Chemical mapping of a 177-nucleotide RNA with 2A3 and DMS. 2A3 adducts were read by reverse transcription with SuperScript II with manganese. It was measured as part of the RMDB library OK2TRN.
RNA sequence: GGGAACGACUCGAGUAGAGUCGAAAAUGAGGCGGCCCGCGCCACCCGCAAGAUCGGGCUGGGAGUCAUGGGUUUGGCGGAACUGCUUGCCGCACUGGGUAUUCCGUACGACAGUGAAGAAGCCGUGUCGAUCAACAACUUUCGAGUUGUUGAUCGAAAAAGAAACAACAACAACAAC
Reactivity to 2A3 in 0.01 (KOAc 150mM, MgCl2 10mM, bicine 150mM(pH8.5), 24C), signal-to-noise 1, nucleotides 027 to 126: u140g010a080g030g000c020g000g030c030c020c000g000c010g000c000c010a010c010c000c010g000c070a100a060g060a240u080c040g000g000g000c040u040g060g000g000a090g080u100c060a180u140g030g000g000u020u060u230g070g000c000g010g030a010a010c050u110g000c040u020u140g000c030c000g040c000a010c020u000g010g000g000u020a060u100u100c050c020g040u070a070c050g050a040c040a000g050u050g060a100a040g040a100a000g010c050c070g030u040g010
Reactivity to DMS in 0.01 (KOAc 150mM, MgCl2 10mM, bicine 150mM(pH8.5), 24C), signal-to-noise 2, nucleotides 027 to 126: u000g010a180g000g010c010g000g000c030c040c040g010c070g040c030c030a160c020c020c040g040c150a120a100g010a100u000c060g020g030g010c090u000g000g010g020a120g000u010c040a050u000g020g000g000u010u000u000g010g000c000g000g000a080a040c090u010g000c070u000u000g040c030c020g030c030a040c040u000g010g000g020u000a110u000u000c020c100g000u010a060c060g000a080c000a090g000u010g000a130a090g000a140a070g020c020c040g000u020g000